[RMDB]
RNA sequence: GGGAACGACUCGAGUAGAGUCGAAAAUAGUCAUUCGUGACUAGCUUAGCGUACUACGCACCUUUUGACGAGUUCCCGUCUACCCACCUGAUCCCAAAUAGGAUCAGAGGACGCACUCGAUAAGGUGCGUAUCGCCGUAUAGAGAGUUCGCUCUCAAACAUUAACCGGUAUUCGUACCGGUUAAUGUAAAAGAAACAACAACAACAAC
Reactivity to 2A3 in 0.01 (KOAc 150mM, MgCl2 10mM, bicine 150mM(pH8.5), 24C), signal-to-noise 7, nucleotides 027 to 156: u070a000g000u010c020a030u130u070c300g120u070g020a020c020u010a020g040c070u100u180a010g000c010g050u080a140c080u010a000c030g000c000a000c010c010u000u090u110u160g300a160c040g000a000g010u050u090c000c020c000g010u010c000u030a160c070c050c050a070c020c020u000g000a000u040c010c030c060a180a280a160u300a150g000g010a000u010c000a000g010a010g010g000a000c000g000c030a000c010u010c020g040a050u030a060a010g020g000u050g000c000g000u000a000u000c010g000c000c000g060u120a100u180a100g020a000g000a000g010u110u110c170g090c100u000c000u000c000a080a130
Reactivity to DMS in 0.01 (KOAc 150mM, MgCl2 10mM, bicine 150mM(pH8.5), 24C), signal-to-noise 4, nucleotides 027 to 156: u000a020g010u000c000a100u000u000c300g030u010g030a050c010u000a010g020c150u010u010a070g010c020g010u000a110c130u000a020c030g030c010a030c010c010u000u000u000u010g030a170c090g000a150g000u000u010c100c050c030g010u000c000u000a050c010c010c020a300c170c000u000g010a010u000c010c010c010a050a170a250u010a060g000g010a000u000c000a010g000a100g020g010a030c010g030c070a030c010u000c010g020a190u010a040a050g000g010u000g010c000g020u000a010u000c010g010c000c030g010u000a160u000a090g000a090g010a050g000u000u010c070g030c040u000c000u000c000a040a160